Conditions: 150 mM KOAc, 10 mM MgCl2 and 150 mM bicine (pH 8.5), 24 C. The record gives the reactivity of an RNA of 177 nucleotides to DMS and 2A3.
[RMDB]
RNA sequence: GGGAACGACUCGAGUAGAGUCGAAAAGAUAUGGAAUGAAGGACAUGCUCCCACUCGGAAACGAGUGAGGAGCAACAGCCUUACAUUCCUAAGUCAAAACUAGUGUGAUCUUCGGAUCACACUAGAACUCAUCUGAAAAGUUCGCUUUUCAGAUGAGAAAAGAAACAACAACAACAAC
Reactivity to DMS in 0.01 (KOAc 150mM, MgCl2 10mM, bicine 150mM(pH8.5), 24C), signal-to-noise 4, nucleotides 027 to 126: g020a010u000a080u030g000g000a010a020u000g000a110a010g000g000a040c080a300u020g020c000u010c010c000c000a010c000u000c000g010g010a030a020a050c000g020a030g020u000g000a140g040g000a000g020c020a030a030c160a190g010c000c000u010u000a150c000a010u000u010c000c000u000a010a110g000u000c010a110a060a150a250c000u000a000g020u000g010u000g000a010u000c000u000u010c300g010g010a010u000c000a000c000a000c000u000a000g000a050a150
Reactivity to 2A3 in 0.01 (KOAc 150mM, MgCl2 10mM, bicine 150mM(pH8.5), 24C), signal-to-noise 3, nucleotides 027 to 126: g020a000u020a000u050g000g010a000a000u010g000a000a020g030g020a020c160a280u300g000c010u020c010c010c000a000c010u000c000g020g000a010a010a010c010g010a000g030u010g010a060g000g010a010g020c020a000a010c010a010g000c000c010u000u040a150c000a000u000u000c000c000u000a020a010g010u000c030a000a000a170a230c000u000a020g000u000g000u000g020a010u010c030u080u150c300g020g000a000u010c000a000c010a000c000u000a010g000a000a000
Description:
For DMS the reverse transcriptase was MarathonRT.